This 177-nucleotide RNA was probed chemically with DMS and 2A3. For 2A3, 2,117 sequencing reads were counted. The DMS profile rests on 2,950 reads. The reactions ran in a buffer of 150 mM KOAc, 10 mM MgCl2 and 150 mM bicine (pH 8.5), at 24 C. Reactivities are given for positions 27 through 126.
RNA sequence: GGGAACGACUCGAGUAGAGUCGAAAAUUUCAUACAGAGUGGACAGGUUGGUGUGCCGCUGUUACGGAACUAGGUAGCUUGCUAGUCAUCACAACGAGUCGUCGAAGAAGGCGAACGACUGUCUCAGGAUCGCAGAACUAUUCGUAGUUCUGCGAUCAAAAGAAACAACAACAACAAC
Reactivity to DMS in 0.01 (KOAc 150mM, MgCl2 10mM, bicine 150mM(pH8.5), 24C), signal-to-noise 3, nucleotides 027 to 126: u000u020u000c050a060u000a100c120a200g000a070g100u030g010g030a000c110a080g000g030u000u000g010g020u000g000u000g010c100c060g020c040u000g000u000u020a080c050g000g030a090a220c130u040a050g070g000u000a040g000c050u000u000g020c030u000a080g020u010c070a030u010c140a060c120a100a100c050g010a140g000u000c000g010u010c000g000a110a060g020a150a100g010g010c010g000a030a020c040g000a240c030u000g000u000c000u010c040a130g000
Reactivity to 2A3 in 0.01 (KOAc 150mM, MgCl2 10mM, bicine 150mM(pH8.5), 24C), signal-to-noise 3, nucleotides 027 to 126: u020u010u010c020a010u070a130c100a020g090a030g210u170g060g000a030c010a030g010g050u120u100g020g050u050g030u070g020c000c080g000c060u030g020u090u000a050c010g050g250a300a070c090u010a090g180g000u000a010g010c020u020u190g020c000u010a060g050u020c030a060u080c050a000c020a050a080c040g010a050g020u010c000g000u030c030g010a100a070g070a190a020g140g030c010g000a020a000c000g120a070c010u050g020u080c020u010c040a040g060